Conditions: 150 mM KOAc, 10 mM MgCl2 and 150 mM bicine (pH 8.5), 24 C. The record gives the reactivity of an RNA of 177 nucleotides to DMS. Reactivities are given for positions 27 through 126. For DMS, 775 sequencing reads were counted. For DMS the reverse transcriptase was MarathonRT. Source: RMDB library OK1LIB, as collected in RNAgym.
RNA sequence: GGGAACGACUCGAGUAGAGUCGAAAAGAACAGGAUAACAGGACGCAAGAUAGGAAGUUCCGAUGAAUUGAGAAGAGCCGUAACUCGAGAACAACGGCAGCGUCCUGAAGAAUUUACGGCUCCAGAACACGGCUACGAGUUUCGACUCGUAGCCGUGAAAAGAAACAACAACAACAAC
Reactivity to DMS in 0.01 (KOAc 150mM, MgCl2 10mM, bicine 150mM(pH8.5), 24C), signal-to-noise 1, nucleotides 027 to 126: g000a230a130c020a000g000g180a070u030a000a290c000a000g010g000a000c000g080c000a100a060g000a170u000a140g000g000a060a300g000u000u000c000c000g060a000u000g000a040a070u000u070g000a070g000a200a220g000a030g000c170c000g030u000a000a270c080u000c000g000a220g000a000a000c070a000a300c020g030g020c010a100g000c000g020u000c000c000u000g000a030a080g000a000a000u000u080u000a000c000g000g000c000u000c000c170a170g060a140a220